Source: RMDB library OK1LIB, as collected in RNAgym. Structure probing data (DMS and 2A3) for a 177-nucleotide construct. The reactions ran in a buffer of 150 mM KOAc, 10 mM MgCl2 and 150 mM bicine (pH 8.5), at 24 C. In probing experiments dimethyl sulfate is read out at A N1 and C N3, which are open when not base-paired. 2A3 adducts were read by reverse transcription with SuperScript II with manganese.
[RMDB]
RNA sequence: GGGAACGACUCGAGUAGAGUCGAAAACCCUUCAGCCCGAGUUUCCUCAAACGCUACCGUAUGAGCGGAAUUGGGCGCGUCUUGUAGACGAGUUUGUCGCUUACCAUGAGCGGUCGGCGAAGGGCGGGCGGGGACUACGUUUCGACGUGGUCUCUGUAAAAGAAACAACAACAACAAC
Reactivity to DMS in 0.01 (KOAc 150mM, MgCl2 10mM, bicine 150mM(pH8.5), 24C), signal-to-noise 3, nucleotides 027 to 126: c010c000c010u030u040c130a150g010c010c000c010g000a050g010u000u000u010c000c000u000c030a050a080a080c010g010c120u020a070c090c040g010u000a080u010g000a020g010c040g010g010a030a090u030u020g010g020g000c010g000c000g000u000c000u000u170g000u160a300g000a050c010g000a300g020u020u030u070g050u060c050g010c010u000u000a090c150c110a130u020g010a080g010c030g010g000u020c030g000g000c000g010a130a070g000g000g000c000g000g000
Reactivity to 2A3 in 0.01 (KOAc 150mM, MgCl2 10mM, bicine 150mM(pH8.5), 24C), signal-to-noise 1, nucleotides 027 to 126: c010c000c000u040u120c050a000g000c000c000c000g010a010g010u000u020u010c000c000u000c000a020a020a000c010g000c020u020a010c020c000g020u040a040u050g010a000g000c010g000g010a020a040u060u030g020g000g000c000g000c000g000u000c000u000u300g140u220a030g000a010c000g000a010g000u000u060u100g090u000c000g000c000u000u020a060c070c040a060u110g030a020g100c010g000g000u030c110g000g010c010g010a060a020g000g000g000c000g000g000